Background
This 177-nucleotide RNA was probed chemically with 2A3 and DMS. It was measured as part of the RMDB library OK2TST. The reactions ran in a buffer of 150 mM KOAc, 10 mM MgCl2 and 150 mM bicine (pH 8.5), at 24 C. 2A3 adducts were read by reverse transcription with SuperScript II with manganese.

RNA sequence: GGGAACGACUCGAGUAGAGUCGAAAAGCAUACUUAGAAACAAGCAAUUAACAUCUUGGUUUCCCUGUAUGUGAGGUAUCAUCUUAUGGACCAAGAUUAAUAACCCACAAGCAAUACUUUAGGAUCACACUAGCGGGUAGUUCGCUACCCGCUAGUGAAAAGAAACAACAACAACAAC
Reactivity to 2A3 in 0.01 (KOAc 150mM, MgCl2 10mM, bicine 150mM(pH8.5), 24C), signal-to-noise 1, nucleotides 027 to 126: g010c000a030u000a070c050u150u160a040g040a060a100a000c020a010a010g020c050a010a080u150u060a140a060c020a040u010c000u000u030g160g000u090u080u010c040c020c010u000g040u020a040u020g020u020g040a050g040g030u050a110u240c010a000u070c040u120u140a080u180g020g000a000c010c010a010a020g000a030u000u040a020a100u060a030a080c020c000c000a040c080a080a000g180c050a070a140u000a130c020u100u160u080a080g040g000a060u100c100a030
Reactivity to DMS in 0.01 (KOAc 150mM, MgCl2 10mM, bicine 150mM(pH8.5), 24C), signal-to-noise 1, nucleotides 027 to 126: g010c050a050u000a060c000u020u000a060g030a030a040a040c070a060a020g000c290a050a100u000u010a140a200c230a080u000c000u000u010g010g000u000u000u010c000c030c060u040g000u000a030u000g030u000g010a040g010g000u000a020u000c100a000u000c100u000u020a100u000g030g000a100c070c060a040a020g000a080u030u000a040a070u010a080a140c060c020c020a070c140a020a140g020c110a060a020u000a050c050u010u010u000a110g010g000a100u000c120a090